[RMDB]
RNA sequence: GGGAACGACUCGAGUAGAGUCGAAAAGAUAUGGAAUAUUAAGCGAGCUCCAUUCGGAAACGAAUGAAGAGCGUCGAACUUAUAUUCCUAAGUCAAACGUGAUGUAUAGUUCGCUAUACAUCACGAACUCUUCAGUCAAGUUCGCUUGACUGAAGAGAAAAGAAACAACAACAACAAC
Reactivity to 2A3 in 0.01 (KOAc 150mM, MgCl2 10mM, bicine 150mM(pH8.5), 24C), signal-to-noise 3, nucleotides 027 to 126: g000a010u040a000u080g000g010a020a020u030a050u230u300a150a100g020c050g030a010g010c000u020c030c010a010u000u000c010g000g010a010a020a000c010g010a020a010u070g050a300a190g020a010g020c010g050u110c040g000a000a000c000u000u010a000u000a000u020u000c000c000u000a010a010g010u000c060a160a080a090c040g000u010g000a000u010g030u000a010u010a000g040u040u100c300g020c190u010a000u000a010c000a010u000c000a000c000g000a000a010
Reactivity to DMS in 0.01 (KOAc 150mM, MgCl2 10mM, bicine 150mM(pH8.5), 24C), signal-to-noise 2, nucleotides 027 to 126: g000a030u000a020u030g000g000a010a000u000a000u010u020a010a000g010c020g000a020g040c000u000c010c000a010u000u010c010g010g000a020a000a040c000g010a000a000u000g000a180a190g010a010g030c000g030u010c200g000a150a100c000u000u000a000u000a020u000u000c000c000u020a000a130g000u000c000a110a140a270c010g020u000g000a010u000g020u000a000u010a000g010u010u030c300g010c000u010a010u020a000c000a000u000c010a020c010g010a020a070